This 177-nucleotide RNA was probed chemically with 2A3 and DMS. As a SHAPE reagent, 2A3 marks flexible, mostly unpaired nucleotides at the ribose 2'-OH. 2A3 adducts were read by reverse transcription with SuperScript II with manganese. It was measured as part of the RMDB library M2PK50.

RNA sequence: GGGAACGACUCGAGUAGAGUCGAAAAUCAAACGAUUUCGAUCGUUUGAAACGGACCACUCCUGCGGGAGUUAUGGCCAUACGGACAGCCGGGUCCACUGCCAGUCAUUCGGUUUCGACCGAAUGAAUGGUAGUAACAUAUUCGUAUGUUACUACCAAAAAGAAACAACAACAACAAC
Reactivity to 2A3 in 0.01 (KOAc 150mM, MgCl2 10mM, bicine 150mM(pH8.5), 24C), signal-to-noise 9, nucleotides 027 to 126: u020c000a010a000a000c000g010a010u040u070u190c210g100a020u000c000g010u000u000u010g000a030a000a010c070g000g000a000c000c000a010c010u010c000c010u050g020c280g070g000g000a010g000u030u130a200u300g010g000c010c000a030u050a080c070g020g020a010c010a010g010c020c000g060g000g000u000c010c000a000c020u030g010c010c000a010g070u020c000a000u000u000c000g010g040u030u050u130c220g100a030c000c000g000a000a000u000g000a010a020
Reactivity to DMS in 0.01 (KOAc 150mM, MgCl2 10mM, bicine 150mM(pH8.5), 24C), signal-to-noise 9, nucleotides 027 to 126: u000c000a000a000a010c000g000a010u000u000u010c190g010a020u000c000g010u000u000u000g000a010a100a110c190g000g000a020c000c010a060c010u000c000c000u000g030c180g030g010g010a020g010u000u010a030u010g020g010c000c020a090u000a070c160g000g000a030c040a170g000c010c000g010g010g000u000c000c010a120c200u010g000c010c010a060g000u000c000a000u000u000c000g010g000u000u000u010c210g010a020c000c000g000a010a000u000g000a010a040

For DMS, 70,244 sequencing reads were counted.